Background
Conditions: 150 mM KOAc, 10 mM MgCl2 and 150 mM bicine (pH 8.5), 24 C. Structure probing data (DMS) for a 177-nucleotide construct. For DMS the reverse transcriptase was MarathonRT. DMS (dimethyl sulfate) methylates the pairing face of unpaired adenines and cytosines.
[RMDB]
RNA sequence: GGGAACGACUCGAGUAGAGUCGAAAAGAUAUGGAGCAAUGUUCGUAGCGCCCAUGGGAGAUCCAGGAUCGGAAACGAUCCUCGGAUCAUCGAUCAUGGGACCCGCUACGAACAUUGCUCCUAAGUCGACCAUUAUGAUCUUCGGAUCAUAAUGGUCAAAAGAAACAACAACAACAAC
Reactivity to DMS in 0.01 (KOAc 150mM, MgCl2 10mM, bicine 150mM(pH8.5), 24C), signal-to-noise 1, nucleotides 027 to 126: g000a120u010a300u000g000g010a020g010c000a050a000u000g000u000u000c000g000u010a000g000c000g030c000c000c000a020u000g000g000g000a120g000a030u000c000c020a030g000g020a020u000c000g000g010a080a190a300c000g010a010u020c010c000u010c140g040g000a040u000c000a060u000c180g020a140u020c000a010u000g000g000g000a130c090c300c110g000c000u000a000c000g000a000a000c000a000u000u000g040c000u000c000c000u000a010a050g000u020c060